The record gives the reactivity of an RNA of 177 nucleotides to DMS. The data come from the RNA Mapping Database (RMDB), library TTRINS. Conditions: 150 mM KOAc, 10 mM MgCl2 and 150 mM bicine (pH 8.5), 24 C.
RNA sequence: GGGAACGACUCGAGUAGAGUCGAAAAGAUAUGGAGGUUUCUCCUAGUGCGAUACAGGGAGAUGGCAGGUCGGAAACGACCUGACAUCGAAGAACUGUAUCGCACUAGGAGAGAACCUCCUAAGUCACGAAACUAUAAUCUUCGGAUUAUAGUUUCGAAAAGAAACAACAACAACAAC
Reactivity to DMS in 0.01 (KOAc 150mM, MgCl2 10mM, bicine 150mM(pH8.5), 24C), signal-to-noise 2, nucleotides 027 to 126: g030a060u020a300u000g000g000a000g010g010u010u000u000c000u000c000c000u000a020g010u000g000c000g050a010u000a000c000a010g000g010g010a090g010a010u000g000g000c000a020g000g020u010c020g040g000a130a170a240c010g000a010c000c000u000g010a010c000a010u000c000g000a120a200g030a120a160c010u000g000u000a000u010c000g000c010a000c000u000a000g000g000a000g000a000g000a020a020c000c000u000c000c000u000a010a070g010u000c090a290